RNA sequence: GGGAACGACUCGAGUAGAGUCGAAAAAAGAUAUGGACCAUUGCAUGGGCGCGCUCCCGAUGAAAGCUCUCGGAAACGAGAGCUGGAGGGAGCGAACUACGCUCUGUGAUGAUGGUCCUAAGUCAAACCUUAUUCGCAAGUUCGCUUGCGAAUAAGGAAAAGAAACAACAACAACAAC
Reactivity to DMS in 0.01 (KOAc 150mM, MgCl2 10mM, bicine 150mM(pH8.5), 24C), signal-to-noise 1, nucleotides 027 to 126: a130a090g000a050u000a300u000g000g000a040c030c020a010u000u000g000c010a030u000g030g050g020c030g000c050g000c000u010c000c000c010g000a070u030g000a230a090a030g010c000u000c000u000c000g000g010a070a120a210c000g010a010g000a000g050c000u000g000g000a070g000g000g000a010g030c040g000a000a030c110u010a300c010g010c000u000c000u000g030u000g000a120u020g000a030u000g000g020u020c010c010u010a010a120g000u000c030a100a030a100
Reactivity to 2A3 in 0.01 (KOAc 150mM, MgCl2 10mM, bicine 150mM(pH8.5), 24C), signal-to-noise 1, nucleotides 027 to 126: a000a000g150a080u120a080u140g000g000a000c000c000a000u000u020g000c070a060u100g000g010g010c010g000c030g020c010u000c000c000c000g170a280u030g080a030a010a000g000c000u000c000u010c000g030g000a120a100a040c020g010a000g040a000g010c010u030g000g000a000g000g030g000a010g000c000g010a000a000c000u160a030c020g010c010u070c090u100g080u030g090a300u070g000a020u000g030g000u000c000c000u040a120a050g040u040c010a040a000a090